The data come from the RNA Mapping Database (RMDB), library OK3TST. An RNA of 207 nucleotides, treated with 2A3 and DMS and read out base by base. Conditions: 150 mM KOAc, 10 mM MgCl2 and 150 mM bicine (pH 8.5), 24 C.
[RMDB]
RNA sequence: GGGAACGACUCGAGUAGAGUCGAAAAAGCUUUGUCAUCACCAGUCUCACUUAACAGCACAAUCCACUCAGGAUUUUUGUCAAGCAAAUCCUCCAUGGAGGCAUCGAAAACCCGUUCUUUGUUAUCAGAAUAGGGGUUCUUCAAACCAUUGGCCUCAUAUCCUAGGACGAUUCGUCGUCCUAGGAUAAAAAGAAACAACAACAACAAC
Reactivity to 2A3 in 0.01 (KOAc 150mM, MgCl2 10mM, bicine 150mM(pH8.5), 24C), signal-to-noise 3, nucleotides 027 to 156: a000g040c060u110u070u040g040u040c010a050u030c020a090c040c020a050g040u040c050u010c070a070c040u120u110a090a040c040a060g020c020a020c060a110a050u020c030c010a100c080u150c100a030g050g010a080u030u010u020u070u150g130u080c040a030a010g010c010a020a060a080u040c010c010u080c010c020a060u060g070g000a010g000g010c020a050u090c070g000a000a000a000a070c030c010c000g000u010u010c030u050u150u080g160u140u140a120u190c040a000g010a060a030u100a220g000g020g030g000u030u010c010u010u060c030a070a090a070c040c050a070u050u140g040g000c010c000u010c030a020
Reactivity to DMS in 0.01 (KOAc 150mM, MgCl2 10mM, bicine 150mM(pH8.5), 24C), signal-to-noise 1, nucleotides 027 to 156: a110g050c050u010u000u000g020u000c020a070u000c010a080c020c040a090g010u000c010u020c020a040c080u010u000a080a070c010a040g010c080a030c120a070a110u000c020c010a080c140u020c130a090g000g000a020u000u010u000u000u000g020u010c110a110a120g010c090a030a050a050u020c020c020u000c010c030a050u000g000g010a060g010g000c010a060u000c070g000a090a030a020a050c010c010c000g030u000u000c000u000u000u000g030u020u000a130u000c120a050g000a020a070u000a020g110g080g000g030u000u000c000u000u000c040a050a090a120c050c040a150u010u000g030g010c010c000u010c020a250